About this RNA
Chemical mapping of a 207-nucleotide RNA with 2A3 and DMS. For DMS the reverse transcriptase was MarathonRT. The data come from the RNA Mapping Database (RMDB), library RNAMAK. For DMS, 1,874 sequencing reads were counted.
[RMDB]
RNA sequence: GGGAACGACUCGAGUAGAGUCGAAAAGAUAUGGAGCAAGAGUAGGUCGGCCCACACGAAGAACAGGACUCGGAAACGAGUCCUGGGAGUGUGGGUGCGACCGCAGAUACUUGCUCCUAAGUCAAAACAGACUACAUAGUUCGCUAUGUAGUCUGAAGAGCAAUAUAACGUUCGCGUUAUAUUGCUCAAAAGAAACAACAACAACAAC
Reactivity to 2A3 in 0.01 (KOAc 150mM, MgCl2 10mM, bicine 150mM(pH8.5), 24C), signal-to-noise 1, nucleotides 027 to 156: g010a010u040a020u110g000g000a010g000c000a000a000g020a040g070u170a110g090g000u010c020g020g000c010c070c000a000c010a010c010g240a300a070g020a070a020c000a000g000g010a000c000u000c020g030g000a030a060a040c000g000a000g000u030c030c010u000g000g000g000a070g000u020g000u010g000g000g000u110g040c000g000a000c000c020g000c000a000g010a000u080a060c000u010u000g000c000u000c000c000u000a010a000g010u000c010a010a020a050a150c000a010g010a000c000u020a000c000a000u020a000g020u070u050c260g030c160u010a000u010g000u000a000g000u000c000u010g000a010a010
Reactivity to DMS in 0.01 (KOAc 150mM, MgCl2 10mM, bicine 150mM(pH8.5), 24C), signal-to-noise 1, nucleotides 027 to 156: g000a120u020a200u000g000g000a020g020c000a040a040g010a100g010u000a120g040g040u000c000g000g020c000c010c000a030c000a000c030g010a120a230g000a160a230c000a030g000g030a030c000u020c020g020g020a050a130a300c000g010a050g010u010c000c010u010g020g000g030a150g050u020g030u000g000g050g040u000g030c000g000a000c010c000g010c100a050g000a240u000a060c000u000u000g010c000u000c000c000u000a000a070g020u010c030a110a130a230a300c060a030g000a000c030u000a000c000a000u010a040g000u030u010c300g030c020u000a000u000g010u000a000g000u010c000u010g000a000a070